RNA sequence: GGGAACGACUCGAGUAGAGUCGAAAAGAUAUGGAGUAGGAGCCUGAUGACCUGUAUGUUUGGUUUAUUCCUAUUCGGAAACGAAUAGGAAUAAACUGAUAUACAGCAAGGGCCCUACUCCUAAGUCCUUUGUACCAAUGUUCGCAUUGGUACAAAGAAAAGAAACAACAACAACAAC
Reactivity to 2A3 in 0.01 (KOAc 150mM, MgCl2 10mM, bicine 150mM(pH8.5), 24C), signal-to-noise 1, nucleotides 027 to 126: g080a040u140a060u240g020g000a030g000u010a010g040g080a230g040c020c010u120g130a300u140g050a130c020c010u020g020u020a010u000g130u010u090u300g010g010u000u000u000a000u000u000c000c020u000a010u020u010c030g030g000a070a100a030c000g010a000a000u030a000g010g000a000a000u000a000a000a000c010u010g000a000u000a000u010a010c010a000g000c000a060a200g000g000g010c000c020c000u000a000c000u010c010c000u000a000a010g000u000c020
Reactivity to DMS in 0.01 (KOAc 150mM, MgCl2 10mM, bicine 150mM(pH8.5), 24C), signal-to-noise 2, nucleotides 027 to 126: g000a110u000a270u010g000g000a010g020u000a010g000g000a230g030c000c000u020g020a120u020g010a100c300c000u000g010u000a000u000g010u000u000u000g070g000u000u000u000a010u000u010c000c010u000a010u000u000c000g030g010a080a100a180c000g000a020a010u000a010g000g010a000a000u010a000a000a000c000u000g000a000u000a000u000a000c000a000g010c040a060a120g010g010g000c000c010c010u010a010c000u010c010c010u000a010a120g010u010c040